[RMDB]
RNA sequence: GGGAACGACUCGAGUAGAGUCGAAAAGGGAACUGGCCGGCGAUGUGGAAGGCGAAGCCGCCGGAGUGCGUCAGCUGCUUCCAAUGCGCGCUGCCGCGGUCCAGUUCGAAAUAGGUGGAGCCGGCGAGAUCGUCGGCUGAUUCGUCAGCCGACGAUCAAAAGAAACAACAACAACAAC
Reactivity to DMS in 0.01 (KOAc 150mM, MgCl2 10mM, bicine 150mM(pH8.5), 24C), signal-to-noise 3, nucleotides 027 to 126: g030g020g000a110a080c070u010g000g030c040c020g030g010c000g020a080u000g020u030g000g010a120a060g020g040c060g000a140a250g000c030c040g020c050c030g000g020a130g020u000g010c010g020u000c070a020g000c090u010g020c020u000u000c160c170a120a110u010g000c120g000c080g000c020u000g010c030c030g000c050g010g000u010c000c000a060g020u000u000c040g010a040a090a050u000a080g010g000u000g010g000a200g020c000c000g010g010c040g000a150
Reactivity to 2A3 in 0.01 (KOAc 150mM, MgCl2 10mM, bicine 150mM(pH8.5), 24C), signal-to-noise 1, nucleotides 027 to 126: g060g000g000a030a030c050u070g100g000c010c020g000g060c000g050a090u150g020u060g130g080a170a050g080g010c120g010a030a010g040c010c020g030c010c030g000g000a020g080u150g000c000g040u020c010a020g010c000u110g000c000u130u000c050c030a040a110u250g020c060g000c000g020c010u070g090c040c000g000c000g010g000u000c000c020a000g000u020u010c030g000a010a060a000u140a050g030g050u070g060g020a000g000c000c000g000g000c040g030a100
Notes:
This 177-nucleotide RNA was probed chemically with DMS and 2A3. High DMS reactivity at an A or C suggests that its Watson-Crick edge is free. 2A3 adducts were read by reverse transcription with SuperScript II with manganese. Source: RMDB library OK2TST, as collected in RNAgym. For DMS the reverse transcriptase was MarathonRT.